[RMDB]
RNA sequence: GGGAACGACUCGAGUAGAGUCGAAAAGCCUCUAGCGUUUGCAAAACGCUGUUUGCGGAAUGAUCUGGAUUUAGCGCAAGUAGGUCCGAAAUCCAGAUCAACAUUUCGGACAACCGCGCUAAUUAAACGUCAAGGUGGGUUUCGACCCACCUUGACGAAAAGAAACAACAACAACAAC
Reactivity to DMS in 0.01 (KOAc 150mM, MgCl2 10mM, bicine 150mM(pH8.5), 24C), signal-to-noise 1, nucleotides 027 to 126: g060c050c010u000c150u000a050g020c000g020u000u000u000g020c190a080a070a000a040c020g010c050u000g000u000u000u010g020c110g000g000a080a060u000g000a050u000c020u000g000g010a060u000u000u000a070g030c190g000c090a110a110g010u000a080g040g000u000c010c000g000a000a020a000u000c080c100a070g000a020u000c200a070a040c170a070u000u000u000c010g000g020a050c060a030a070c030c100g000c010g000c020u000a030a110u000u000a070a070a050

The data come from the RNA Mapping Database (RMDB), library M2PK90. Structure probing data (DMS) for a 177-nucleotide construct. For DMS the reverse transcriptase was MarathonRT. Conditions: 150 mM KOAc, 10 mM MgCl2 and 150 mM bicine (pH 8.5), 24 C.